[RMDB]
RNA sequence: GGGAACGACUCGAGUAGAGUCGAAAAAGCGCGUUCUCAGUGUACGGAGAAGUUGAUAUCACUGUAGUGAAGGCAACUAUAUCAGCACGUUUCCCGUUAAAUCUGCUAUCAGUACACCCCAACAAGACGUCAUAAUCGUGUUCGCACGAUUAUGACGAAAAGAAACAACAACAACAAC
Reactivity to 2A3 in 0.01 (KOAc 150mM, MgCl2 10mM, bicine 150mM(pH8.5), 24C), signal-to-noise 5, nucleotides 027 to 126: a010g160c130g000c020g030u040u030c020u010c030a020g030u050g030u070a050c070g080g040a060g030a100a040g010u040u000g010a020u020a020u120c010a010c030u090g090u230a090g030u100g050a030a030g120g020c010a040a010c010u010a010u020a040u150c050a010g020c010a000c110g030u010u040u020c000c010c000g010u020u140a080a030a050u040c010u020g060c020u030a020u090c030a000g010u020a020c020a050c000c000c000c000a080a110c050a030a060g100a070
Reactivity to DMS in 0.01 (KOAc 150mM, MgCl2 10mM, bicine 150mM(pH8.5), 24C), signal-to-noise 2, nucleotides 027 to 126: a060g000c080g050c060g000u010u000c020u000c010a080g000u000g000u000a050c140g020g000a070g020a160a150g030u000u000g000a030u020a110u000c060a050c000u010g010u010a020g030u000g010a040a300g000g030c080a020a020c020u020a110u040a060u000c000a080g000c010a090c000g010u000u000u020c030c000c010g060u000u020a090a060a060u030c060u000g000c040u000a000u000c020a010g030u000a030c020a140c070c060c000c020a160a080c170a100a080g000a250